[RMDB]
This 177-nucleotide RNA was probed chemically with DMS and 2A3. The 2A3 profile rests on 4,491 reads. For DMS, 4,347 sequencing reads were counted. Reactivities are rounded to 0.1 and cut off at 0 and 3. It was measured as part of the RMDB library OK1LIB.
RNA sequence: GGGAACGACUCGAGUAGAGUCGAAAACGCAUGGGCGCAUCAACGGUCGGUAUCCGCGCGAACAUCGCCGCCUACCAUCAUGGCGAAUCUUGGUUGGACGAGCUGCUCCCUUAUCUGCGGGCGAACCACUAUACAAGCGCUUCGGCGCUUGUAUAGUAAAAGAAACAACAACAACAAC
Reactivity to DMS in 0.01 (KOAc 150mM, MgCl2 10mM, bicine 150mM(pH8.5), 24C), signal-to-noise 3, nucleotides 027 to 126: c080g010c050a050u010g000g020g000c040g000c120a140u020c100a110a210c120g000g000u010c030g000g010u020a050u030c020c070g030c070g020c040g000a080a080c120a110u000c020g010c040c010g050c030c040u000a120c090c080a060u000c040a060u010g000g000c050g000a060a050u060c080u010u000g000g020u040u000g010g000a090c070g000a110g000c060u000g000c060u000c020c010c020u000u010a110u020c090u020g000c060g000g000g000c040g020a110a180c060c030
Reactivity to 2A3 in 0.01 (KOAc 150mM, MgCl2 10mM, bicine 150mM(pH8.5), 24C), signal-to-noise 5, nucleotides 027 to 126: c040g050c030a100u110g040g030g000c040g000c010a050u070c030a070a060c030g050g020u050c010g060g030u080a080u060c040c010g050c000g020c050g050a060a040c020a080u070c050g020c050c010g010c000c020u030a060c020c010a080u140c040a070u140g070g000c050g040a060a070u060c040u100u120g050g020u040u040g020g020a050c020g030a030g020c010u020g000c000u040c000c000c000u020u090a140u120c030u050g020c030g010g000g000c010g010a030a060c010c000